[RMDB]
RNA sequence: GGGAACGACUCGAGUAGAGUCGAAAAAAAAAGAUAUGGAGCAAAGGAACCUCGGGUGACGUUUGACGUGUGGUCGGAAACGACCACACCGAGUCACCUCGAGAAACUUUGCUCCUAAGUCAAAAAACUAAACAUAUCACUUCGGUGAUAUGUUUAGAAAAGAAACAACAACAACAAC
Reactivity to DMS in 0.01 (KOAc 150mM, MgCl2 10mM, bicine 150mM(pH8.5), 24C), signal-to-noise 1, nucleotides 027 to 126: a040a060a060a130a050g000a010u000a270u000g000g000a020g000c000a010a000a000g000g000a250a200c100c000u000c010g010g000g010u000g000a010c000g000u010u020u010g000a120c300g000u010g060u000g010g000u000c010g050g000a010a010a030c000g040a010c000c000a000c020a010c000c000g000a120g000u000c000a000c010c000u010c010g000a000g010a010a040a090c000u000u000u000g000c000u000c000c000u000a000a030g000u000c020a010a130a070a100a060a190

Chemical mapping of a 177-nucleotide RNA with DMS. Reactivities are given for positions 27 through 126. The DMS profile rests on 1,540 reads. Source: RMDB library TTRDES, as collected in RNAgym.